[RMDB]
RNA sequence: GGGAACGACUCGAGUAGAGUCGAAAAACUAGUAUGUACAGGGGUGAGUUGGCCUGUCAUCUAGACUGCUGACCAUCAACUCACCGGUCAGCUGGAUGAUGUCCACAGAGUACGACAUCAGUACUCAGAGUAAGGUUGCGUUCGCGUAACUUUACUCAAAAGAAACAACAACAACAAC
Reactivity to DMS in 0.01 (KOAc 150mM, MgCl2 10mM, bicine 150mM(pH8.5), 24C), signal-to-noise 9, nucleotides 027 to 126: a180c000u000a000g000u040a020u010g010u050a010c010a020g000g000g010g010u010g000a070g010u000u010g010g000c030c010u000g000u000c000a000u000c010u000a010g010a190c050u000g000c010u010g000a020c000c030a140u020c140a050a070c130u020c110a080c170c130g000g000u000c000a010g000c010u000g000g000a090u020g010a080u010g010u010c010c040a110c220a110g010a040g010u000a030c050g000a130c180a090u040c110a080g010u000a020c000u000c020a140
Reactivity to 2A3 in 0.01 (KOAc 150mM, MgCl2 10mM, bicine 150mM(pH8.5), 24C), signal-to-noise 9, nucleotides 027 to 126: a000c010u010a010g050u110a050u060g060u090a010c000a010g020g010g010g050u100g070a110g030u030u030g030g030c000c010u000g000u000c000a000u000c000u000a010g050a070c030u020g000c000u000g000a000c000c000a040u120c050a050a090c050u030c080a070c030c020g000g000u000c000a000g000c010u020g020g020a050u080g010a020u050g050u030c020c010a050c050a060g030a000g020u030a010c060g080a030c090a170u110c030a040g010u010a010c010u010c040a010
Background: Chemical mapping of a 177-nucleotide RNA with DMS and 2A3. Values cover nucleotides 27 to 126. The data come from the RNA Mapping Database (RMDB), library OK1LIB.